[RMDB]
Structure probing data (2A3) for a 177-nucleotide construct. Values are in units of 0.01, from 0 to 300, in steps of 10. The RNA was probed in 150 mM KOAc, 10 mM MgCl2 and 150 mM bicine (pH 8.5) at 24 C.
RNA sequence: GGGAACGACUCGAGUAGAGUCGAAAAACAUGAGGCUUACGAGCCUCAUGAGCGUGACGCCGGGCCCCUCUGACGGUUUGCAGCCGCCAUGUCGGAGUCAUAGUACAGCAGCUUACGAGCUGCUGAACGCGGACUGGCAUUUCGAUGCCAGUCCGCGAAAAGAAACAACAACAACAAC
Reactivity to 2A3 in 0.01 (KOAc 150mM, MgCl2 10mM, bicine 150mM(pH8.5), 24C), signal-to-noise 2, nucleotides 027 to 126: a000c020a000u000g000a000g000g000c020u130u070a090c300g080a030g000c000c000u000c000a000u000g000a000g060c020g060u040g020a060c070g000c000c040g040g000g000c000c000c000c000u010c000u020g000a000c010g110g050u040u010u140g020c010a020g010c000c040g010c000c000a040u120g070u110c000g010g000a000g000u030c030a090u080a090g110u070a080c050a000g020c020a000g020c000u090u140a130c220g050a000g000c000u020g000c000u000g000a000a000